[RMDB]
RNA sequence: GGGAACGACUCGAGUAGAGUCGAAAAGCGGGGCUUGAAACGCGGGUAGCGCGCACGCCCGGCGAAGAAGUUCGCAUAGGCGGUGUGCUGGUGCCGAAGUGUCUGCUGCAACGGCACGCUCGACACCUAGAACAUACCGUAUUCGUACGGUAUGUAAGACGUAGACUCUGUUCGCAGAGUCUACGUCAAAAGAAACAACAACAACAAC
Reactivity to 2A3 in 0.01 (KOAc 150mM, MgCl2 10mM, bicine 150mM(pH8.5), 24C), signal-to-noise 3, nucleotides 027 to 156: g030c030g010g020g020g010c030u050u080g090a100a120a010c080g000c010g060g010g040u070a030g020c010g000c000g000c040a030c030g010c030c000c000g020g010c030g010a020a030g030a030a020g190u020u010c010g000c030a050u150a090g030g000c040g020g010u010g000u010g010c050u040g020g040u030g000c010c020g010a060a030g020u030g040u060c070u080g070c030u060g000c050a110a010c030g000g050c010a000c020g000c020u020c000g000a010c000a010c010c010u030a050g020a110a010c000a000u000a000c000c000g010u000a010u020u120c150g060u010a000c000g000g000u000a000u000g000u000a020a050
Reactivity to DMS in 0.01 (KOAc 150mM, MgCl2 10mM, bicine 150mM(pH8.5), 24C), signal-to-noise 1, nucleotides 027 to 156: g010c070g000g010g040g030c060u000u020g010a030a090a000c080g040c020g000g010g020u000a080g000c090g050c040g030c020a060c060g040c010c000c050g040g010c000g010a030a090g000a210a080g000u000u020c000g060c060a110u000a000g000g010c010g000g000u000g010u000g000c000u000g000g020u010g000c010c010g020a030a160g050u000g000u010c010u020g030c070u010g000c130a190a190c080g000g090c000a040c010g030c160u020c000g000a060c010a050c010c010u000a130g010a090a040c010a000u010a000c000c000g000u000a040u000u000c300g040u000a000c000g020g020u000a000u000g000u000a040a150